[RMDB]
RNA sequence: GGGAACGACUCGAGUAGAGUCGAAAAGCAACUCGGUUCGCCGAGUUGCAAAUAAAAUCAGCGGUAAAUUCGAGGCGUAAAUUACCCCUGAACGCCUCGAUAAAAGUCUUCAGUUCGCUGAAGACAACGGAAUAGAUUUGUUCGCAAAUCUAUUCCGAAAAGAAACAACAACAACAAC
Reactivity to 2A3 in 0.01 (KOAc 150mM, MgCl2 10mM, bicine 150mM(pH8.5), 24C), signal-to-noise 2, nucleotides 027 to 126: g020c000a000a010c000u000c010g000g070u050u090c220g020c110c020g010a000g000u010u000g000c000a010a010a000u020a000a030a000a070u040c030a020g090c040g120g040u100a100a150a160u090u020c010g000a010g010g000c010g000u010a020a060a050u170u110a150c020c000c000c020u020g020a050a020c000g000c000c010u000c000g000a000u000a000a000a000a010g000u000c000u000u000c000a010g040u010u050c170g020c070u000g000a000a000g000a000c010a020a000
Reactivity to DMS in 0.01 (KOAc 150mM, MgCl2 10mM, bicine 150mM(pH8.5), 24C), signal-to-noise 2, nucleotides 027 to 126: g010c000a000a020c000u010c010g010g000u000u010c190g030c000c000g000a030g000u010u000g020c010a000a020a030u000a090a090a050a120u010c080a040g030c060g000g020u000a070a060a140u020u000c000g000a010g000g030c000g000u000a040a090a170u000u010a190c080c000c010c030u000g010a200a030c010g000c000c000u000c000g010a000u000a020a100a090a090g000u000c000u000u000c000a020g000u000u000c190g000c010u010g010a020a020g000a010c010a040a130